[RMDB]
RNA sequence: GGGAACGACUCGAGUAGAGUCGAAAACACUACAGUUUUAGAAUUCAGCUCAAUUUUUUAAAAUUUAACACCUUGGGGUAGAAAUCCAUCUCUCAAGAAGCUGUUUUUGAUGUAAGGUGAUGUGUACCUAUCAUCCUCAUUUCGAUGAGGAUGAUAGAAAAGAAACAACAACAACAAC
Reactivity to DMS in 0.01 (KOAc 150mM, MgCl2 10mM, bicine 150mM(pH8.5), 24C), signal-to-noise 2, nucleotides 027 to 126: c050a040c010u000a160c080a050g020u000u010u000u000a220g010a030a060u020u010c060a030g010c030u010c150a050a010u040u010u040u040u010u020a020a030a080a020u010u000u010a110a170c090a050c190c020u000u000g000g000g000g010u000a080g000a060a080a090u010c110c120a090u010c020u000c020u010c020a010a020g010a180a080g010c020u000g010u010u000u000u000u010g010a030u020g030u000a050a080g000g030u010g010a110u010g010u010g020u000a130c170
Reactivity to 2A3 in 0.01 (KOAc 150mM, MgCl2 10mM, bicine 150mM(pH8.5), 24C), signal-to-noise 1, nucleotides 027 to 126: c000a010c050u120a060c020a120g010u050u000u070u300a010g020a020a010u050u010c030a030g010c020u040c030a080a070u020u000u070u000u260u300a190a200a040a040u060u140u140a200a050c030a050c040c010u030u010g070g000g000g010u090a040g070a080a210a010u030c060c020a050u000c010u060c000u020c030a020a000g030a000a000g000c030u000g000u000u030u000u020u010g000a040u060g020u050a060a110g010g000u050g050a080u110g030u020g030u050a050c000
An RNA of 177 nucleotides, treated with DMS and 2A3 and read out base by base. The DMS profile rests on 984 reads. For DMS the reverse transcriptase was MarathonRT. 2A3 adducts were read by reverse transcription with SuperScript II with manganese. Reactivities are rounded to 0.1 and cut off at 0 and 3. The data come from the RNA Mapping Database (RMDB), library OK2TRN.